[RMDB]
RNA sequence: GGGAACGACUCGAGUAGAGUCGAAAACUCAGGCCAAAUUAUUUGGGGCUUACCAUCAUCUGGCUGAGGGGGUAGGAAAUAAAACAGUGGUCCCUCCUUUUAAGGCAAGCCUAGGUUAAUGUGUGGAAUUUUACCGUAAAUUCGUUUACGGUAAAAUAAAAGAAACAACAACAACAAC
Reactivity to DMS in 0.01 (KOAc 150mM, MgCl2 10mM, bicine 150mM(pH8.5), 24C), signal-to-noise 7, nucleotides 027 to 126: c010u010c030a090g020g000c010c020a030a120a110u020u020a090u020u040u020g020g010g000g000c040u000u010a080c040c020a100u020c140a080u030c110u010g010g000c030u010g010a040g010g010g000g020g010u020a080g010g010a080a070a100u030a040a090a110a100c160a090g010u010g010g010u000c060c030c020u010c010c010u000u000u010u020a080a100g000g000c080a050a040g000c010c000u000a080g000g000u000u020a060a140u010g010u000g010u010g010g010a100
Reactivity to 2A3 in 0.01 (KOAc 150mM, MgCl2 10mM, bicine 150mM(pH8.5), 24C), signal-to-noise 7, nucleotides 027 to 126: c010u020c020a020g050g060c020c010a020a100a150u200u110a190u100u180u200g050g000g020g030c020u040u050a050c020c000a050u200c000a030u010c030u040g020g000c020u030g010a050g000g000g020g010g050u120a060g050g200a040a140a090u300a070a130a050a020c090a070g060u110g110g110u100c020c000c000u010c000c000u050u100u060u150a110a050g050g000c030a010a010g000c000c010u010a050g000g080u040u090a090a150u100g060u030g010u050g100g020a040